Structure probing data (2A3) for a 207-nucleotide construct. The 2A3 profile rests on 315 reads.
RNA sequence: GGGAACGACUCGAGUAGAGUCGAAAAUGCACUCAUGGUUUAAACUUUGAUUUAUUCAUUCAUUUGACAAAUAUUUAUUGAAUGCACAUACCACCUGCUGGUUGAAAGAGCUGUUGAUGUGUACUUUUGCAGGUUCUGUACUGCACAACUCCAACAAAGUAAAUCCCAUCUUCGGAUGGGAUUUACUAAAAGAAACAACAACAACAAC
Reactivity to 2A3 in 0.01 (KOAc 150mM, MgCl2 10mM, bicine 150mM(pH8.5), 24C), signal-to-noise 1, nucleotides 027 to 156: u030g000c010a000c010u080c070a000u070g050g000u040u070u050a110a050a000c040u290u070u030g070a110u030u050u300a050u030u130c050a010u030u030c030a040u180u080u080g010a080c080a020a170a040u230a160u260u300u080a130u180u090g000a000a030u040g000c040a050c050a130u240a050c000c000a000c010c000u090g000c040u030g060g000u050u030g130a170a170a100g170a040g000c030u040g000u040u070g020a040u010g030u000g000u150a160c070u120u190u010u060g000c000a000g000g000u210u140c000u130g010u120a050c000u030g010c010a030c000a030a010c000u000c030c000a060a040c030a020a210